Source information:
Source: RMDB library OK1LIB, as collected in RNAgym. Chemical mapping of a 177-nucleotide RNA with 2A3. Values cover nucleotides 27 to 126. For 2A3, 588 sequencing reads were counted. The reactions ran in a buffer of 150 mM KOAc, 10 mM MgCl2 and 150 mM bicine (pH 8.5), at 24 C.
[RMDB]
RNA sequence: GGGAACGACUCGAGUAGAGUCGAAAAUCCGUAGACGGAGUGACGCUUCAUGUACAAGCUGUACACGCCAACGUAGACCACGAAGCCCAUUACCCCCAGCCAGCAGGCCAGAGGAUUGGCGCCAAACGUGGGUUUUAGCGUUCGCGCUAAAACCCACAAAAGAAACAACAACAACAAC
Reactivity to 2A3 in 0.01 (KOAc 150mM, MgCl2 10mM, bicine 150mM(pH8.5), 24C), signal-to-noise 1, nucleotides 027 to 126: u000c040c050g000u030a010g000a110c040g050g000a060g030u060g020a000c010g010c110u000u010c080a130u090g000u240a060c030a000a070g000c110u000g140u090a080c090a010c070g000c000c000a030a000c030g120u150a010g020a070c010c010a020c030g080a030a030g110c000c000c020a020u000u020a040c000c040c000c000c000a000g000c000c000a010g000c040a000g000g000c000c000a030g000a010g090g020a020u030u010g080g060c090g000c000c000a010a130a110c060